Structure probing data (2A3 and DMS) for a 207-nucleotide construct. DMS adducts were read by reverse transcription with MarathonRT. The reactions ran in a buffer of 150 mM KOAc, 10 mM MgCl2 and 150 mM bicine (pH 8.5), at 24 C. Values are in units of 0.01, from 0 to 300, in steps of 10. High 2A3 reactivity points to a flexible backbone, as in loops and unpaired stretches.

RNA sequence: GGGAACGACUCGAGUAGAGUCGAAAAUCCUAAGUCAAUGUGCUGUACCUUUGAUCUCUUCUUGUCAGACACAUCGGAAACGAUGUGUCUUGGAUUUAGAAGAGGGAGGUACAGGGCAUUGAUAUGGAAAAGCGAUAAGACUUCGGUCUUAUCGCAACCUGAUACAAGUCUUCGGACUUGUAUCAGGAAAAGAAACAACAACAACAAC
Reactivity to 2A3 in 0.01 (KOAc 150mM, MgCl2 10mM, bicine 150mM(pH8.5), 24C), signal-to-noise 4, nucleotides 027 to 156: u010c010c000u010a130a020g010u010c010a000a000u000g010u050g200c000u000g010u000a000c000c010u210u300u100g130a120u090c000u010c000u000u000c000u000u010g000u000c010a000g010a010c000a000c000a010u000c000g020g040a080a070a050c010g000a000u000g020u010g010u000c000u010u030g020g000a010u170u120u120a010g000a000a000g000a010g010g000g000a000g000g000u010a010c000a000g000g020g010c000a000u000u000g000a010u000a060u030g030g050a040a110a050a000g010c000g010a000u020a000a000g000a010c030u030u110c300g070g000u000c010u000u000a000u000c000g000c000a000a000
Reactivity to DMS in 0.01 (KOAc 150mM, MgCl2 10mM, bicine 150mM(pH8.5), 24C), signal-to-noise 1, nucleotides 027 to 156: u000c010c000u000a050a220g010u010c000a000a010u000g030u000g000c010u000g010u000a000c000c010u000u000u000g000a110u020c000u000c000u010u000c000u000u000g010u000c000a060g020a030c000a030c000a030u000c000g030g000a180a120a300c000g050a020u000g040u000g010u010c000u020u010g050g030a020u000u010u010a020g020a030a000g040a050g050g010g000a020g030g030u000a010c000a020g010g030g010c010a000u000u020g000a040u000a140u000g000g000a110a100a110a190g000c010g020a010u000a000a010g000a010c000u000u020c300g020g010u000c000u000u000a020u000c000g000c010a000a020
About this RNA:
For 2A3 the reverse transcriptase was SuperScript II with manganese.